[RMDB]
Structure probing data (DMS and 2A3) for a 177-nucleotide construct. Conditions: 150 mM KOAc, 10 mM MgCl2 and 150 mM bicine (pH 8.5), 24 C. Source: RMDB libraries RFM100 and RFMREP, as collected in RNAgym.

RNA sequence: GGGAACGACUCGAGUAGAGUCGAAAAGUUGACGACUUUACCCGACGCUACUGAGAGGAGGUGCAUGGCCGCCGUCAGCUCGUACCGUGAGGCGUCCUGUUAAGUCAGGCAACGAGCGAGACCCGCAGAUGAGCACAUCAUUCGUGAUGUGCUCAUCAAAAGAAACAACAACAACAAC
Reactivity to DMS in 0.01 (KOAc 150mM, MgCl2 10mM, bicine 150mM(pH8.5), 24C), signal-to-noise 3, nucleotides 027 to 126: g010u000u000g000a200c130g000a090c010u010u000u000a060c130c050c060g010a040c030g020c040u010a040c020u010g010a100g010a040g000g000a090g000g020u020g000c080a100u030g010g010c060c010g030c020c050g010u010c020a040g000c010u010c010g010u020a200c120c040g020u010g010a140g000g050c210g010u030c020c020u000g010u020u020a060a050g000u010c020a010g000g000c120a130a040c050g000a100g010c040g000a100g020a110c030c010c020g000c210a180
Reactivity to 2A3 in 0.01 (KOAc 150mM, MgCl2 10mM, bicine 150mM(pH8.5), 24C), signal-to-noise 5, nucleotides 027 to 126: g070u040u060g100a030c080g010a000c020u000u000u030a030c020c030c000g000a020c010g010c000u060a030c030u120g030a020g000a030g160g030a040g050g020u060g020c100a170u210g120g000c080c010g030c000c010g150u060c020a030g010c010u020c020g040u060a080c000c020g050u060g070a080g060g040c020g060u070c000c020u030g000u040u060a070a120g170u020c020a020g010g040c000a020a010c010g010a010g040c040g010a050g060a100c000c010c010g020c040a020